[RMDB]
RNA sequence: GGGAACGACUCGAGUAGAGUCGAAAAAUCGCAACUUCCAAGCGGAUUUAAGAGACCUCAUGAACUACGGUGAACUGAAGACCCAAUUCCUUGGGCUGCUGAAGCGGCGCGACAUUACGGACGGUCAUCAAGCUCGCUGGUUCGCCAGCGAGCUUGAAAAAGAAACAACAACAACAAC
Reactivity to 2A3 in 0.01 (KOAc 150mM, MgCl2 10mM, bicine 150mM(pH8.5), 24C), signal-to-noise 1, nucleotides 027 to 126: a000u050c000g000c010a000a120c000u300u000c070c010a040a030g140c020g040g010a110u000u000u300a040a020g060a000g050a160c000c000u290c070a110u210g000a030a040c040u030a050c080g060g000u070g040a060a150c100u070g190a040a000g060a010c000c010c010a080a150u040u150c030c010u020u050g040g000g000c000u000g000c040u140g050a070a020g080c000g050g010c010g000c020g000a080c030a080u080u150a000c070g090g000a020c050g010g100u020c020a000
An RNA of 177 nucleotides, treated with 2A3 and read out base by base. For 2A3 the reverse transcriptase was SuperScript II with manganese. Reactivities are given for positions 27 through 126. The data come from the RNA Mapping Database (RMDB), library OK1LIB.